[RMDB]
RNA sequence: GGGAACGACUCGAGUAGAGUCGAAAAAGUCUACUUUUCGAAGUAGACUGUGCUCCCACUUGAUCGAGGUGUCACCGUGUCAUUGCCCACGACACUCGGGCGUAAUAGAUUGGUUCGCCAAUCUAAACUAGUGUGGUCAUUUCGAUGACCACACUAGAAAAGAAACAACAACAACAAC
Reactivity to DMS in 0.01 (KOAc 150mM, MgCl2 10mM, bicine 150mM(pH8.5), 24C), signal-to-noise 3, nucleotides 027 to 126: a010g010u000c000u010a000c000u000u000u010u020c130g000a010a020g000u000a010g010a010c000u010g010u010g030c190u000c000c000c010a150c180u010u010g010a040u000c020g000a040g020g000u000g000u000c010a170c110c080g020u000g010u000c050a120u000u010g010c040c030c020a110c110g000a040c040a050c040u000c070g010g000g010c020g000u010a060a150u010a000g000a010u000u000g000g000u000u020c240g020c000c000a000a010u000c000u000a010a090a170
Reactivity to 2A3 in 0.01 (KOAc 150mM, MgCl2 10mM, bicine 150mM(pH8.5), 24C), signal-to-noise 2, nucleotides 027 to 126: a000g010u000c000u000a020c000u020u100u060u150c220g080a000a000g000u000a000g000a010c010u000g010u060g000c050u010c010c000c010a030c030u050u200g100a130u070c030g020a050g080g050u040g000u010c030a050c130c090g010u040g020u040c050a190u080u300g090c040c010c000a040c060g060a020c030a020c030u060c030g030g000g000c000g040u040a080a060u010a070g010a000u010u000g040g020u020u040c150g040c060c010a010a000u000c010u020a020a020a010